Chemical mapping of a 177-nucleotide RNA with DMS and 2A3. It was measured as part of the RMDB library M2PK90. For 2A3, 1,515 sequencing reads were counted. Values are in units of 0.01, from 0 to 300, in steps of 10. 2A3 adducts were read by reverse transcription with SuperScript II with manganese.
RNA sequence: GGGAACGACUCGAGUAGAGUCGAAAAAUACAGCGUAAUCGAGCGGAGGAAAACGGCACUCCGAAAAUCCGGUACGUUUAUGAUCCCACUGCGUCGACGCUAGAUGCAGAACCGGAUUGCCGAGGAACUGAACCAAGAUGUUCGCAUCUUGGUUCAGAAAAGAAACAACAACAACAAC
Reactivity to DMS in 0.01 (KOAc 150mM, MgCl2 10mM, bicine 150mM(pH8.5), 24C), signal-to-noise 2, nucleotides 027 to 126: a080u030a080c110a120g000c020g000u000a070a070u010c040g020a040g010c030g000g000a040g000g000a030a110a080a110c060g010g010c030a100c030u000c000c000g010a060a090a010a020u010c000c000g000g000u030a070c070g000u010u000u010a130u010g000a100u010c000c000c020a300c060u000g000c000g050u000c010g030a140c150g030c180u000a090g020a000u000g010c000a020g000a090a050c050c010g010g010a030u000u000g010c020c000g010a090g020g000a090a110
Reactivity to 2A3 in 0.01 (KOAc 150mM, MgCl2 10mM, bicine 150mM(pH8.5), 24C), signal-to-noise 2, nucleotides 027 to 126: a000u140a010c070a020g010c010g090u110a080a090u140c010g030a030g150c010g020g010a020g000g030a090a170a030a070c020g010g000c000a000c050u000c020c000g020a080a030a000a000u030c030c020g000g020u070a040c030g030u080u120u110a100u100g080a070u030c000c000c000a010c030u010g000c000g010u010c010g060a110c100g010c200u080a060g010a020u000g000c010a000g060a030a010c050c000g010g000a030u000u050g000c020c000g010a030g030g000a110a010